[RMDB]
RNA sequence: GGGAACGACUCGAGUAGAGUCGAAAAAGAUUUUUUGCCAUAUCACUUACUAUUGACCAGUAUUGGCAAUGCUGGCUAUUUGAAAUACCAAGAUGUCUCUACUGGACAAUUGGUUGCAGAACACCGAUACCCUAAUUUAUUUCGAUAAAUUAGGGUAAAAAGAAACAACAACAACAAC
Reactivity to 2A3 in 0.01 (KOAc 150mM, MgCl2 10mM, bicine 150mM(pH8.5), 24C), signal-to-noise 6, nucleotides 027 to 126: a000g060a060u110u080u060u040u070u120g040c030c020a060u060a050u180c040a050c070u130u200a050c040u060a060u100u080g050a100c010c010a000g000u000a020u030u040g020g000c010a020a030u060g040c020u020g010g020c010u030a080u060u090u120g140a130a120a010u050a010c010c000a030a040g110a200u050g020u010c000u020c010u120a150c090u090g010g000a000c000a000a010u010u030g030g000u000u030g010c030a020g010a130a010c030a010c050c010g010a030
Reactivity to DMS in 0.01 (KOAc 150mM, MgCl2 10mM, bicine 150mM(pH8.5), 24C), signal-to-noise 9, nucleotides 027 to 126: a060g010a050u000u000u000u010u000u000g010c020c070a070u010a070u010c070a080c120u000u000a090c080u010a050u000u000g010a100c020c010a100g010u000a040u000u000g010g010c040a050a130u010g010c080u000g000g000c140u000a080u000u000u010g000a090a090a070u000a040c010c000a020a030g000a160u000g010u000c000u000c160u000a070c160u010g010g000a050c000a020a130u000u010g010g000u000u000g010c100a060g000a040a060c160a090c060c040g010a210
Chemical mapping of a 177-nucleotide RNA with 2A3 and DMS. For DMS, 13,992 sequencing reads were counted. The RNA was probed in 150 mM KOAc, 10 mM MgCl2 and 150 mM bicine (pH 8.5) at 24 C. The 2A3 profile rests on 9,263 reads. The data come from the RNA Mapping Database (RMDB), library OK2TST.